Source: RMDB library RNAMAK, as collected in RNAgym.
This 207-nucleotide RNA was probed chemically with 2A3 and DMS.
2A3 adducts were read by reverse transcription with SuperScript II with manganese.
High DMS reactivity at an A or C suggests that its Watson-Crick edge is free.
For DMS, 2,755 sequencing reads were counted.
The reactions ran in a buffer of 150 mM KOAc, 10 mM MgCl2 and 150 mM bicine (pH 8.5), at 24 C.

RNA sequence: GGGAACGACUCGAGUAGAGUCGAAAACGUCAGUUCGCUGACGCGUUCGAUAUGGAGACGAACUACUGGCUACUAGAACGAAGAACAGAAUUCGGAAACGAAUUCUGGGAGUUCUAGGUCCAGCGUCUCCUAAGUCAACUUGUGCUUUCGAGCACAACUCUAUUAAGCUCUUCGGAGCUUAAUAGAGAAAAGAAACAACAACAACAAC
Reactivity to 2A3 in 0.01 (KOAc 150mM, MgCl2 10mM, bicine 150mM(pH8.5), 24C), signal-to-noise 5, nucleotides 027 to 156: c000g010u010c000a010g010u070u180c210g030c160u010g000a010c020g010c070g090u060u120c110g000a000u000a000u030g000g000a000g010a010c000g010a040a010c050u220a050c000u300g050g030c140u300a060c000u000a120g010a000a000c010g290a300a030g000a020a000c010a000g000a000a000u000u010c000g010g000a010a020a000c000g000a000a000u010u000c000u000g010g010g000a020g000u000u010c000u000a000g000g010u000c000c000a000g000c000g010u010c000u010c000c000u000a000a000g000u000c010a010a030c050u070u070g000u010g010c000u140u130u180c250g120a010g010c000a000c000a010a020
Reactivity to DMS in 0.01 (KOAc 150mM, MgCl2 10mM, bicine 150mM(pH8.5), 24C), signal-to-noise 2, nucleotides 027 to 156: c010g030u000c010a010g000u020u030c270g090c000u000g020a050c000g010c060g050u020u000c050g030a070u000a110u000g000g010a030g030a030c000g010a090a280c050u000a300c000u000g000g000c030u010a040c000u000a020g020a010a060c000g020a170a160g040a120a240c030a000g000a060a000u010u000c000g040g000a150a100a240c000g010a040a010u010u010c010u000g000g000g020a180g020u010u000c010u010a020g000g000u000c120c000a010g010c000g000u000c010u010c000c010u000a020a090g000u010c040a060a070c110u030u000g000u000g000c010u010u000u010c180g020a070g000c000a060c010a030a100